[RMDB]
RNA sequence: GGGAACGACUCGAGUAGAGUCGAAAAGCGGUGAUGCAGAGGUGUGAGGCUGAGAAGUCUCAAUUGGAGACAUCAUCGAAUUAAAGCUGGUUUAAGUACACCUCUGAUCUUAGACUAGCAGAAGAUAGUAUGAGUUUGUAUUCGUACAAGCUCAUACAAAAGAAACAACAACAACAAC
Reactivity to 2A3 in 0.01 (KOAc 150mM, MgCl2 10mM, bicine 150mM(pH8.5), 24C), signal-to-noise 9, nucleotides 027 to 126: g070c010g000g000u000g000a000u000g000c000a000g000a000g000g000u010g000u030g010a000g000g000c000u000g010a010g010a050a010g000u000c000u000c000a000a000u060u060g120g040a060g010a020c000a000u000c000a000u000c000g010a010a010u120u080a110a030a010g000c000u000g000g000u000u000u010a000a000g000u000a000c010a020c010c000u000c000u000g000a000u000c000u000u000a000g000a000c000u010a000g000c010a000g050a080a010g060a040u160a040
Reactivity to DMS in 0.01 (KOAc 150mM, MgCl2 10mM, bicine 150mM(pH8.5), 24C), signal-to-noise 9, nucleotides 027 to 126: g010c020g010g010u000g000a010u000g010c010a010g000a020g010g020u010g020u010g000a020g000g000c000u000g010a230g000a170a010g010u000c000u000c000a070a000u030u050g010g010a190g010a070c000a000u000c000a000u000c010g000a090a060u020u020a070a090a130g000c010u000g000g000u000u000u000a010a010g000u000a070c040a030c000c000u000c010u000g000a060u020c000u000u000a020g000a010c000u000a020g010c010a220g010a100a090g000a110u020a100